RNA sequence: GGGAACGACUCGAGUAGAGUCGAAAAUGGAUGAGCCUGGAAAAUGCAUUCGUGGAUGUGGAGGGAAGCUGGAAGGUGUGAGCAUGGAUGUGAGCAUGGAUGUGGGUCGGCAGCACCGGGACACAGCGGAAACUUUAUCGUUCGCGAUAAAGUUUCCAAAAGAAACAACAACAACAAC
Reactivity to 2A3 in 0.01 (KOAc 150mM, MgCl2 10mM, bicine 150mM(pH8.5), 24C), signal-to-noise 1, nucleotides 027 to 126: u100g020g010a040u040g030a030g090c040c030u070g060g060a030a070a040a020u100g040c010a070u000u100c000g040u040g020g010a100u050g070u070g050g020a080g000g000g010a020a000g000c050u060g000g100a070a020g000g040u030g000u040g050a020g000c030a030u100g050g070a010u070g050u040g100a020g010c030a000u100g010g050a040u080g040u090g100g080g070u030c000g000g060c010a010g000c010a040c010c010g000g000g020a040c070a010c010a070g090c030
Reactivity to DMS in 0.01 (KOAc 150mM, MgCl2 10mM, bicine 150mM(pH8.5), 24C), signal-to-noise 2, nucleotides 027 to 126: u000g020g020a090u010g000a170g000c020c040u000g010g020a070a050a120a100u010g010c020a080u000u000c100g040u010g000g000a080u000g000u000g030g000a120g020g010g010a090a080g020c050u000g010g000a100a020g020g010u000g010u020g010a160g000c050a040u010g000g010a130u010g030u000g010a100g040c090a050u000g020g030a080u000g010u010g000g010g000u010c070g010g010c020a160g000c100a140c020c020g000g000g010a070c100a050c120a030g010c250